Overview: An RNA of 177 nucleotides, treated with DMS and read out base by base. The data come from the RNA Mapping Database (RMDB), library TTRINS. The reactions ran in a buffer of 150 mM KOAc, 10 mM MgCl2 and 150 mM bicine (pH 8.5), at 24 C. The DMS profile rests on 1,979 reads.
[RMDB]
RNA sequence: GGGAACGACUCGAGUAGAGUCGAAAAGAUAUGGACGUGGAUAGUCGCAACAGCUCAAAGUCAUAUGUAAGAUCGGAAACGAUCUUACAUAUGACUUUGAGACAUGCGAUAUCACACGUCCUAAGUCGUUCACAAAAUGGUUCGCCAUUUUGUGAACAAAAGAAACAACAACAACAAC
Reactivity to DMS in 0.01 (KOAc 150mM, MgCl2 10mM, bicine 150mM(pH8.5), 24C), signal-to-noise 2, nucleotides 027 to 126: g010a150u050a300u000g010g000a010c000g070u000g010g000a030u010a020g010u010c000g030c000a050a090c300a170g000c000u000c000a000a020a000g000u000c000a010u000a000u010g010u000a000a010g010a010u000c020g020g010a110a080a280c000g000a000u000c010u010u010a000c000a020u000a010u000g000a000c000u000u000u000g000a000g020a000c080a120u000g000c000g010a020u010a000u010c010a140c000a010c000g030u000c000c010u000a000a090g000u000c090